[RMDB]
RNA sequence: GGGAACGACUCGAGUAGAGUCGAAAAGGGGUCCAAGGUGCCUACUUGGAUUUAUUUCUGAGGCUGAAGCCUCCACGGCUACCCACCAGAAAUUGUCAGUAGGCUCCUUGGACGGAGGCACCCAAAAACGAGUAAUAUCUUCGGAUAUUACUCGUAACUCAUCAGUAAGCUUCGGCUUACUGAUGAGAAAAGAAACAACAACAACAAC
Reactivity to 2A3 in 0.01 (KOAc 150mM, MgCl2 10mM, bicine 150mM(pH8.5), 24C), signal-to-noise 1, nucleotides 027 to 156: g030g010g010g010u000c020c010a010a000g010g000u020g000c010c000u010a040c050u120u160g120g010a050u210u300u120a030u010u040u030c030u020g050a050g000g000c120u080g170a100a000g000c020c000u060c090c270a190c180g000g000c000u010a110c000c000c000a110c030c040a060g000a000a010a010u030u020g000u010c000a000g000u000a000g010g000c000u030c000c000u000u030g010g000a000c000g000g000a010g020g050c030a130c000c060c060a040a080a020a030a000c000g000a000g000u010a000a020u020a000u010c040u090u070c270g000g000a000u010a000u000u000a000c000u000c000g000u000a000a010